RNA sequence: GGGAACGACUCGAGUAGAGUCGAAAACCGUGACAAUGCGAAAGCAAGGCUGGCGGUAGGUAGUCCUGGGCGGCGACAGCCUUGGACUGCGGCGUAAAGGUGUACCUGGGGCCGUUAAACCUAUCGUGAAAGGCAACUUGGUUCGCCAAGUUGCCAACCUUAUUCGCGCGUUCGCGCGCGAAUAAGGAAAAGAAACAACAACAACAAC
Reactivity to 2A3 in 0.01 (KOAc 150mM, MgCl2 10mM, bicine 150mM(pH8.5), 24C), signal-to-noise 1, nucleotides 027 to 156: c000c010g020u080g010a080c180a160a030u090g040c020g080a060a000a050g100c040a120a060g090g000c070u080g040g000c030g000g010u000a000g000g000u030a000g000u020c020c040u020g010g010g000c020g050g040c120g060a050c100a050g000c000c000u000u000g010g030a000c040u000g010c000g000g000c040g000u080a120a120a060g090g000u160g130u190a190c000c000u020g040g000g060g030c000c000g000u060u120a000a200a000c010c000u010a000u040c000g010u020g020a070a140a020g010g000c000a020a000c000u000u000g000g020u000u010c060g040c010c000a000a010g000u000u000g000c000c000a000a010
Structure probing data (2A3) for a 207-nucleotide construct. The reactions ran in a buffer of 150 mM KOAc, 10 mM MgCl2 and 150 mM bicine (pH 8.5), at 24 C. 2A3 adducts were read by reverse transcription with SuperScript II with manganese. Reactivities are given for positions 27 through 156.